[RMDB]
RNA sequence: GGGAACGACUCGAGUAGAGUCGAAAAGAUAUGGACGUCUGGCUCGCGAGGAUCUAUAAAAGUCACCUUCUAUAUCGGAAACGAUAUAGAAGGUGUCGCUAUAGGGAGCGAGAGGACGUCCUAAGUCCAUCAAAGCGAACUUCGGUUCGCUUUGAUGAAAAGAAACAACAACAACAAC
Reactivity to DMS in 0.01 (KOAc 150mM, MgCl2 10mM, bicine 150mM(pH8.5), 24C), signal-to-noise 2, nucleotides 027 to 126: g020a140u000a270u000g000g010a000c020g000u000c010u000g010g050c010u000c000g060c010g010a030g010g010a030u020c000u000a000u000a030a090a110a250g000u000c000a030c000c000u020u000c000u010a000u000a000u000c000g010g000a070a060a240c020g000a010u000a000u000a000g010a000a010g010g000u000g060u000c030g000c300u000a000u000a010g010g000g000a020g030c020g000a000g040a300g020g000a020c000g020u000c000c000u020a020a070g000u000c040